Record summary:
Structure probing data (2A3 and DMS) for a 177-nucleotide construct. Source: RMDB library M2PK50, as collected in RNAgym.
[RMDB]
RNA sequence: GGGAACGACUCGAGUAGAGUCGAAAAGCUAGCCCGUUCGCGGGCUAGCAAAGGCUAAGGAAUAAAAAUCUGCUAGUUACCUAAGCCAAAAACGAGCAGAAAAAACUCUACUCUUCGGAGUAGAGAACACUUAAUUCUUGUUCGCAAGAAUUAAGUGAAAAGAAACAACAACAACAAC
Reactivity to 2A3 in 0.01 (KOAc 150mM, MgCl2 10mM, bicine 150mM(pH8.5), 24C), signal-to-noise 2, nucleotides 027 to 126: g000c010u000a010g010c030c060c000g020u040u030c130g020c010g080g020g030c000u000a010g000c000a000a030a020g000g000c010u070a010a030g120g060a200a240u260a180a200a060a040a090u040c010u010g000c010u010a030g070u040u030a020c010c000u050a030a040g000c030c000a120a060a050a030a010c040g020a000g000c010a020g000a100a070a010a020a030a050c000u000c000u000a000c000u010c000u020u040c240g140g000a000g000u000a000g000a000g010a010a010
Reactivity to DMS in 0.01 (KOAc 150mM, MgCl2 10mM, bicine 150mM(pH8.5), 24C), signal-to-noise 2, nucleotides 027 to 126: g000c000u000a000g010c000c010c010g020u010u010c250g040c040g050g010g020c020u000a010g010c000a020a030a080g000g000c010u000a060a050g020g010a170a060u020a040a040a090a130a090u000c000u000g010c000u000a120g010u000u010a100c000c000u000a070a070g000c000c000a040a100a030a040a040c040g000a030g000c000a030g000a000a100a090a110a100a120c010u010c010u000a010c000u000c000u000u020c150g010g000a000g020u000a000g000a020g000a050a100